[RMDB]
An RNA of 207 nucleotides, treated with DMS and 2A3 and read out base by base. Source: RMDB library M2RFPK, as collected in RNAgym. For 2A3 the reverse transcriptase was SuperScript II with manganese. For DMS the reverse transcriptase was MarathonRT.
RNA sequence: GGGAACGACUCGAGUAGAGUCGAAAAACAGUCAGUACGCUGACUGAGGGUAACGGGAGCCGGGCUUGGGACAAGAGCCAUCCCAAGUCCAAGGCCAAGUAGGCUCUAGUGAUGGUACGCCAUCACAAAAACUGGUCUACCUUCGGGUAGACCAGAACUUUAAAAGAUACUUCGGUAUCUUUUAAAGAAAAGAAACAACAACAACAAC
Reactivity to DMS in 0.01 (KOAc 150mM, MgCl2 10mM, bicine 150mM(pH8.5), 24C), signal-to-noise 1, nucleotides 027 to 156: a120c030a020g020u000c000a030g050u020a130c300g080c000u030g000a060c000u000g000a170g000g010g000u000a110a190c100g020g020g000a190g030c000c040g050g060g040c000u000u000g030g000g020a020c040a020a030g000a030g060c030c040a300u000c020c000c000a000a090g000u000c000c000a030a090g000g000c030c090a090a110g000u000a060g030g090c000u020c020u000a230g000u010g000a010u000g030g000u000a100c300g010c020c020a000u000c000a000c020a030a050a000a100a100c000u000g020g040u000c000u000a000c000c000u000u010c300g050g010g060u000a010g000a000c010c000a020g000a020a070
Reactivity to 2A3 in 0.01 (KOAc 150mM, MgCl2 10mM, bicine 150mM(pH8.5), 24C), signal-to-noise 4, nucleotides 027 to 156: a000c000a000g010u010c000a000g020u040a030c190g060c130u000g010a000c000u000g020a080g050g020g040u080a100a070c090g020g050g060a040g040c050c040g020g000g010c010u000u000g010g000g000a010c020a060a060g000a010g020c000c000a010u000c000c000c000a000a000g000u000c010c010a030a020g040g010c030c010a080a040g060u130a100g070g000c000u000c020u020a020g000u000g010a000u010g000g020u020a040c240g070c030c000a000u010c000a000c010a000a080a010a000a000c000u010g000g000u010c000u000a000c010c010u020u050c150g100g000g000u000a000g000a000c010c000a000g000a000a000